Annotation
The record gives the reactivity of an RNA of 177 nucleotides to 2A3. For 2A3, 531 sequencing reads were counted. 2A3 adducts were read by reverse transcription with SuperScript II with manganese. It was measured as part of the RMDB library OK1LIB. Conditions: 150 mM KOAc, 10 mM MgCl2 and 150 mM bicine (pH 8.5), 24 C.

RNA sequence: GGGAACGACUCGAGUAGAGUCGAAAACUGGGUGCUGGGGUCCAGGUGCCGGCCGCCGUGAAAGACGUACACGGACGAGCUGUAGUGCGAUGGCGUCAGUUUCAGGGACACCGCGGUACCCCCGAGCCGGCAGACCUUGGUUCGCCAAGGUCUGCCGAAAAGAAACAACAACAACAAC
Reactivity to 2A3 in 0.01 (KOAc 150mM, MgCl2 10mM, bicine 150mM(pH8.5), 24C), signal-to-noise 1, nucleotides 027 to 126: c010u050g000g040g000u090g010c000u060g030g020g030g020u010c000c000a060g050g070u050g000c000c010g040g000c020c050g080c030c000g000u050g140a050a050a040g080a160c090g030u210a120c000a010c000g020g100a120c010g000a070g050c110u100g050u110a090g040u060g220c030g040a200u070g060g000c060g060u050c050a060g010u000u090u040c050a060g000g020g020a030c080a070c100c000g040c060g040g000u050a010c000c000c000c000c000g000a010g000c000